[RMDB]
RNA sequence: GGGAACGACUCGAGUAGAGUCGAAAAGCACACUCCCAAGUUGAAAGGGGGUGGUGCUGUUUGACGGUAUUUGAAGCGUUGAUGUUUGCCGUAGCGUUUGCGACUUUAAUCAUCGCGGUGCUGUCGUAUAGUAUUUUGACUUCGGUCAAAAUACUAUAAAAGAAACAACAACAACAAC
Reactivity to 2A3 in 0.01 (KOAc 150mM, MgCl2 10mM, bicine 150mM(pH8.5), 24C), signal-to-noise 8, nucleotides 027 to 126: g000c000a000c000a000c000u010c000c000c000a030a060g130u130u120g230a100a050a070g000g000g000g010g000u030g030g030u030g000c010u030g050u030u060u150g000a010c000g030g020u040a110u050u120u170g200a150a010g000c020g010u020u020g020a040u040g070u050u230u160g050c020c010g010u010a040g060c090g160u070u160u250g000c010g000a020c020u100u170u120a070a020u060c020a000u020c010g000c000g020g000u010g000c010u010g010u030c010g010u010
Reactivity to DMS in 0.01 (KOAc 150mM, MgCl2 10mM, bicine 150mM(pH8.5), 24C), signal-to-noise 6, nucleotides 027 to 126: g020c000a040c000a020c000u000c000c000c000a090a160g030u030u040g020a080a120a170g000g010g010g010g010u000g010g020u000g020c000u000g020u010u000u010g000a010c010g000g010u000a020u010u020u010g000a090a110g010c010g020u010u010g000a040u010g010u000u010u000g010c060c030g020u000a050g030c150g020u000u030u010g000c000g010a030c050u010u010u040a100a080u010c120a100u000c020g030c010g010g010u010g010c020u000g010u020c030g010u010
Structure probing data (2A3 and DMS) for a 177-nucleotide construct. The data come from the RNA Mapping Database (RMDB), libraries RFM100 and RFMREP. Conditions: 150 mM KOAc, 10 mM MgCl2 and 150 mM bicine (pH 8.5), 24 C. Values cover nucleotides 27 to 126.